RNA sequence: GGGAACGACUCGAGUAGAGUCGAAAACCUGUAACGUUCGCGUUACAGGAAAAUAAAAAUCUCCUGCCAGGAGAAGGCGAAAAAUUGAUCGAAAACGAUCAAAAAGUCUACAGUUCGCUGUAGACAAGUUUACAAUUUCGUUCGCGAAAUUGUAAACAAAAGAAACAACAACAACAAC
Reactivity to DMS in 0.01 (KOAc 150mM, MgCl2 10mM, bicine 150mM(pH8.5), 24C), signal-to-noise 1, nucleotides 027 to 126: c010c000u000g010u010a000a010c000g050u000u010c170g080c010g010u000u000a000c010a010g010g010a040a020a070a110u010a030a060a110a110a140u000c070u000c000c000u000g030c110c090a100g000g020a090g000a080a010g000g000c050g000a120a010a050a110a150u000u000g000a020u000c000g000a140a080a160a150c080g000a020u000c000a010a010a120a130a100g000u000c000u000a000c000a010g010u000u010c160g040c020u070g010u000a000g000a010c010a030a020
Reactivity to 2A3 in 0.01 (KOAc 150mM, MgCl2 10mM, bicine 150mM(pH8.5), 24C), signal-to-noise 1, nucleotides 027 to 126: c010c000u020g000u000a000a020c010g020u000u110c300g020c000g110u000u000a000c000a000g020g040a050a050a020a020u130a000a060a050a010a030u030c030u000c030c000u030g080c020c030a030g040g030a070g060a120a030g070g030c040g150a130a060a020a000a020u080u050g010a000u000c000g040a140a080a050a300c000g010a010u040c030a000a000a000a020a000g000u030c000u000a010c000a000g010u010u040c100g020c130u000g000u010a000g000a010c000a000a000